RNA sequence: GGGAACGACUCGAGUAGAGUCGAAAACUAAUACGUCGUUCAGAACCUGCGCGUCCUUGAACGGGCGGUGCGGCGGUCGGCUGAUCACGAACAGGGACCGAGAUGUGGUCACUCGCUCCAGCUUGAUCCCGAGCUACCGUUUCGACGGUAGCUCGGGAAAAGAAACAACAACAACAAC
Reactivity to 2A3 in 0.01 (KOAc 150mM, MgCl2 10mM, bicine 150mM(pH8.5), 24C), signal-to-noise 1, nucleotides 027 to 126: c040u000a030a060u160a170c050g040u000c000g010u080u000c020a120g030a040a000c000c020u070g000c180g020c020g000u030c030c000u030u090g050a080a070c050g000g000g000c000g110g020u050g120c050g000g000c010g000g060u050c050g070g020c040u090g000a130u030c000a000c040g010a120a000c040a070g030g030g020a000c040c190g010a030g030a210u160g040u050g020g010u040c000a030c020u000c010g030c030u000c000c000a040g000c000u060u150g000a100u060